[RMDB]
Source information
Conditions: 150 mM KOAc, 10 mM MgCl2 and 150 mM bicine (pH 8.5), 24 C. An RNA of 177 nucleotides, treated with DMS and 2A3 and read out base by base. For 2A3 the reverse transcriptase was SuperScript II with manganese. It was measured as part of the RMDB library OK1LIB. The 2A3 profile rests on 3,640 reads.

RNA sequence: GGGAACGACUCGAGUAGAGUCGAAAAGCCAGCAGACGAAGAUGGGUAUCCUGAUGAAAAAGAGAAUAAGAAUGUAUUGAAUGCUGAUAUUGAUCCAGAUAAGAUGAAGGAUACGGAUCAGGUUGAACCCGAUUUACUAUUUCGAUAGUAAAUCGGGAAAAGAAACAACAACAACAAC
Reactivity to DMS in 0.01 (KOAc 150mM, MgCl2 10mM, bicine 150mM(pH8.5), 24C), signal-to-noise 4, nucleotides 027 to 126: g000c030c020a100g000c040a080g000a100c030g000a070a090g010a060u020g010g000g000u000a060u000c010c020u000g000a100u010g000a100a040a070a100a110g000a120g000a060a060u020a050a050g000a080a080u040g010u000a080u010u030g010a040a090u020g010c030u000g010a030u040a060u010u020g010a050u010c040c040a080g010a100u040a050a100g020a090u030g000a130a100g000g010a080u030a040c050g000g000a040u000c020a030g010g020u010u000g020a040a170
Reactivity to 2A3 in 0.01 (KOAc 150mM, MgCl2 10mM, bicine 150mM(pH8.5), 24C), signal-to-noise 4, nucleotides 027 to 126: g050c000c000a020g000c040a040g040a110c090g050a080a050g020a100u180g040g020g000u060a090u010c020c000u030g020a030u150g110a030a090a100a040a000g100a020g090a070a070u140a130a030g040a110a070u130g060u170a110u120u250g070a110a070u080g030c020u010g010a050u020a070u200u150g020a010u080c030c010a000g050a160u130a130a060g070a020u220g080a010a030g030g020a020u040a120c000g050g010a010u000c010a030g010g000u070u080g040a050a000